[RMDB]
RNA sequence: GGGAACGACUCGAGUAGAGUCGAAAAUGGGGGAGGCCAGCUGAGCGCCGAUCUGGAUGCGGGAUCGAUCGUGCUCGGGUCGGUGAGCAUCCCCUCGACGGGUGGGUGGCAGAACUGGACCACGGUGGGACACCCAUAAAUUCGUUUAUGGGUGUCCAAAAGAAACAACAACAACAAC
Reactivity to 2A3 in 0.01 (KOAc 150mM, MgCl2 10mM, bicine 150mM(pH8.5), 24C), signal-to-noise 1, nucleotides 027 to 126: u130g010g000g000g010g020a010g000g030c000c030a010g020c040u030g010a020g060c000g050c010c040g000a000u000c020u030g100g010a110u140g050c050g000g000g070a100u080c050g050a080u090c030g040u030g020c020u020c000g020g000g020u030c010g020g030u020g030a030g030c000a060u010c000c010c030c010u040c020g080a080c040g000g010g090u140g020g050g000u060g010g000c040a040g000a060a060c010u040g000g040a000c030c060a040c040g000g050u100g060
Reactivity to DMS in 0.01 (KOAc 150mM, MgCl2 10mM, bicine 150mM(pH8.5), 24C), signal-to-noise 3, nucleotides 027 to 126: u000g000g010g010g010g020a080g030g020c020c020a110g010c060u010g010a070g010c020g020c020c020g000a010u000c020u000g010g030a060u000g010c060g010g000g010a140u010c110g010a110u000c060g020u000g000c000u000c010g000g000g000u000c060g010g030u000g000a140g020c040a110u000c000c000c010c010u000c110g010a080c130g010g000g000u000g020g020g000u000g030g000c070a060g020a070a080c070u000g010g020a110c050c040a050c140g000g000u010g000